[RMDB]
This 177-nucleotide RNA was probed chemically with 2A3 and DMS. Conditions: 150 mM KOAc, 10 mM MgCl2 and 150 mM bicine (pH 8.5), 24 C. The data come from the RNA Mapping Database (RMDB), library OK2TRN. 2A3 adducts were read by reverse transcription with SuperScript II with manganese.
RNA sequence: GGGAACGACUCGAGUAGAGUCGAAAAUACCUGGAGUGUCAGGAAGCUGUCUUCAACCCCCAGAGCCGCGGCCCAGCUUUCUUCUCGCGGGUGCGCCGUCUCACUCACCUGCUGGUGCAUGUCGAGCCUAAUGCUUCAGUUUCGACUGAAGCAUUAGAAAAGAAACAACAACAACAAC
Reactivity to 2A3 in 0.01 (KOAc 150mM, MgCl2 10mM, bicine 150mM(pH8.5), 24C), signal-to-noise 2, nucleotides 027 to 126: u120a040c000c000u000g040g030a090g060u080g080u130c060a050g000g040a040a010g040c050u050g070u130c020u120u110c090a120a300c020c010c020c010c020a020g030a010g060c030c030g000c040g010g030c000c000c000a010g000c000u060u130u040c010u110u040c040u040c020g070c000g010g000g030u020g060c020g020c010c020g040u000c000u020c020a020c010u020c010a040c000c020u090g010c020u110g070g020u050g000c010a020u100g040u120c030g000a010g030c010
Reactivity to DMS in 0.01 (KOAc 150mM, MgCl2 10mM, bicine 150mM(pH8.5), 24C), signal-to-noise 6, nucleotides 027 to 126: u010a110c030c020u000g010g010a110g020u010g010u010c050a060g000g010a100a090g010c050u000g010u000c040u000u000c070a090a300c040c010c010c030c030a110g000a060g020c060c100g000c060g010g000c030c030c020a070g020c040u000u000u000c070u000u000c070u000c070g010c070g000g000g010u000g010c060g020c050c050g010u000c020u000c030a150c050u000c040a050c060c030u010g010c060u010g010g020u000g010c060a050u000g010u000c050g000a120g000c170